[RMDB]
RNA sequence: GGGAACGACUCGAGUAGAGUCGAAAAACAAUCGUUGUGCAAGAGCGAAGUUUGGCAGUUGGCGAAAAAGUUGCGGCUAUAAAUUACUCUGUGAUUACCCUAAGUAAACACUAUGCAAGGAAAAUAUUUAACUCUGUGUUUGUGCCCAUCGACAAGGCCAUUGCGUACUAUUCGUAGUACGCAAUGGAAAAGAAACAACAACAACAAC
Reactivity to 2A3 in 0.01 (KOAc 150mM, MgCl2 10mM, bicine 150mM(pH8.5), 24C), signal-to-noise 2, nucleotides 027 to 156: a030c080a030a070u090c050g010u050u060g030u060g050c120a120a040g000a010g070c030g050a070a050g020u010u080u060g070g000c020a030g010u070u020g030g000c000g070a160a000a000a000a090g090u070u030g000c010g000g000c030u040a050u070a130a080a020u050u040a070c020u030c050u120g070u070g010a060u060u030a040c010c010c040u000a020a040g020u080a050a130a000c020a010c060u110a090u130g040c030a020a020g040g040a010a090a050a000u180a160u110u180u070a050a050c010u020c050u060g010u010g000u040u060u030g040u060g030c000c000c000a050u070c020g090a100c020a100a000g220g000
Reactivity to DMS in 0.01 (KOAc 150mM, MgCl2 10mM, bicine 150mM(pH8.5), 24C), signal-to-noise 2, nucleotides 027 to 156: a060c080a100a140u010c050g000u000u000g000u000g000c050a100a120g000a080g000c000g010a120a070g020u000u000u000g030g030c020a100g050u010u020g030g030c000g010a110a050a020a080a090g060u010u000g010c020g020g060c030u000a070u000a040a070a070u000u000a050c040u010c040u030g050u000g020a160u000u000a150c050c030c040u000a050a070g030u000a110a040a100c020a060c060u000a070u000g020c050a110a100g040g010a070a110a110a100u000a080u000u000u000a070a100c030u000c010u000g000u020g010u000u000u000g050u000g040c030c030c040a090u000c090g020a080c060a010a050g010g000